[RMDB]
RNA sequence: GGGAACGACUCGAGUAGAGUCGAAAACGGAACAGCACACCAGAAGUGGAACCUGCGGCUUAAUUUGACUCAACACGGGGAAACUCACGAGCGCAAGACAGAGAAGGGAUUGACAGAUUGAGAGCUCUUUCUUGAUUCUUUGGGUGGUGGUGCAUGGCUAAGACAUAUUCUUCGGAAUAUGUCUUAGAAAAGAAACAACAACAACAAC
Reactivity to 2A3 in 0.01 (KOAc 150mM, MgCl2 10mM, bicine 150mM(pH8.5), 24C), signal-to-noise 6, nucleotides 027 to 156: c050g040g020a070a000c010a020g010c010a010c000a020c030c020a050g050a180a010g090u040g010g020a020a030c010c010u040g030c040g040g020c050u060u070a080a080u190u200u150g070a110c030u060c140a050a020c030a030c150g000g000g000g050a020a050a040c000u040c040a050c070g040a030g000c050g000c040a010a020g010a030c030a010g030a010g020a060a020g070g020g020a050u070u110g050a060c040a040g120a090u090u160g050a080g010a020g110c010u010c000u020u080u020c010u030u060g070a150u150u010c040u060u090u060g070g010g020u040g030g020u020g030g040u030g020c030a080u040g060g000
Reactivity to DMS in 0.01 (KOAc 150mM, MgCl2 10mM, bicine 150mM(pH8.5), 24C), signal-to-noise 3, nucleotides 027 to 156: c070g020g000a070a120c030a080g020c030a090c030a100c020c000a090g020a210a140g040u000g010g000a110a160c040c010u000g030c020g020g020c030u000u000a050a160u000u000u000g020a080c040u020c020a090a100c050a090c070g010g030g010g010a190a080a060c030u000c010a090c060g020a090g000c050g020c070a050a080g000a100c050a110g020a090g030a040a060g010g010g010a130u010u020g010a220c080a070g010a120u010u000g020a160g000a140g000c080u000c050u010u010u010c020u000u000g010a120u000u000c020u000u000u010g010g000g010u000g010g010u010g000g000u000g000c030a060u000g000g000